[RMDB]
RNA sequence: GGGAACGACUCGAGUAGAGUCGAAAAUGAAUAGGAGGAAAAGCUGUUUUUGUGUUUCUCCUUAUACUAUGCUCAAUCAGCUAGUCAUUCCAUGGCUUUAAGAUUACAAUGUACUUGAGUCAUUGACUUUUAGGGUUAGUUUCGACUAACCCUAAAAAAAAGAAACAACAACAACAAC
Reactivity to 2A3 in 0.01 (KOAc 150mM, MgCl2 10mM, bicine 150mM(pH8.5), 24C), signal-to-noise 4, nucleotides 027 to 126: u130g040a070a080u050a080g010g020a000g000g070a000a060a030a060g060c040u050g160u190u110u050u120u120g090u040g030u030u020u000c010u010c010c000u020u010a020u010a000c010u020a040u300g030c000u000c030a180a240u100c030a060g000c010u000a010g010u010c010a060u070u000c050c020a030u010g000g000c000u020u030u240a050a000g010a050u050u130a080c110a120a130u300g020u090a070c000u000u010g000a010g000u000c010a020u000u080g110a100c060
Reactivity to DMS in 0.01 (KOAc 150mM, MgCl2 10mM, bicine 150mM(pH8.5), 24C), signal-to-noise 7, nucleotides 027 to 126: u010g010a140a090u010a030g010g000a020g010g000a020a030a090a110g020c060u020g000u020u020u010u010u010g010u010g000u000u000u000c010u000c010c020u000u010a090u020a080c030u000a010u050g010c010u000c160a110a120u020c230a070g020c030u000a010g010u000c090a070u010u010c050c060a070u010g000g000c000u000u000u030a030a050g000a130u020u010a070c170a120a100u020g000u020a050c010u000u000g000a020g000u000c000a040u020u020g010a100c170